[RMDB]
RNA sequence: GGGAACGACUCGAGUAGAGUCGAAAAGAUAUGGAUUUGUACGUGAUGCCAACAGCUUGCCAUCGGAAACGAUGGUCAAGACAUGGCAUCACAAAUCCUAAGUCAAAGUCGAUCUUCGGAUCGACAAUCAAUAACGAUGGUUCGCCAUCGUUAUUGAAAAAGAAACAACAACAACAAC
Reactivity to 2A3 in 0.01 (KOAc 150mM, MgCl2 10mM, bicine 150mM(pH8.5), 24C), signal-to-noise 9, nucleotides 027 to 126: g020a010u050a030u110g010g010a020u020u040u080g130u160a210c300g120u110g020a000u010g000c000c100a290a040c100a220g050c010u000u010g000c000c000a000u000c000g010g000a060a030a010c000g000a010u010g010g040u070c040a000a010g000a000c010a090u300g000g000c000a000u000c010a000c000a010a000a000u000c000c000u020a090a020g040u020c060a140a060a060g000u010c000g010a010u000c010u050u120c300g130g000a000u000c010g000a000c000a000a060
Reactivity to DMS in 0.01 (KOAc 150mM, MgCl2 10mM, bicine 150mM(pH8.5), 24C), signal-to-noise 9, nucleotides 027 to 126: g010a030u010a300u020g000g000a010u000u000u000g010u010a150c300g020u000g000a010u000g010c000c000a070a090c270a150g000c000u000u000g000c000c000a010u000c000g010g000a080a050a130c000g010a000u000g000g000u010c020a000a000g000a020c080a300u010g000g010c000a000u000c000a010c010a000a010a010u000c000c000u010a060a160g010u000c030a120a110a170g010u000c000g010a010u000c000u000u020c230g020g000a010u000c000g000a010c010a030a070
An RNA of 177 nucleotides, treated with 2A3 and DMS and read out base by base. It was measured as part of the RMDB library TTRDES.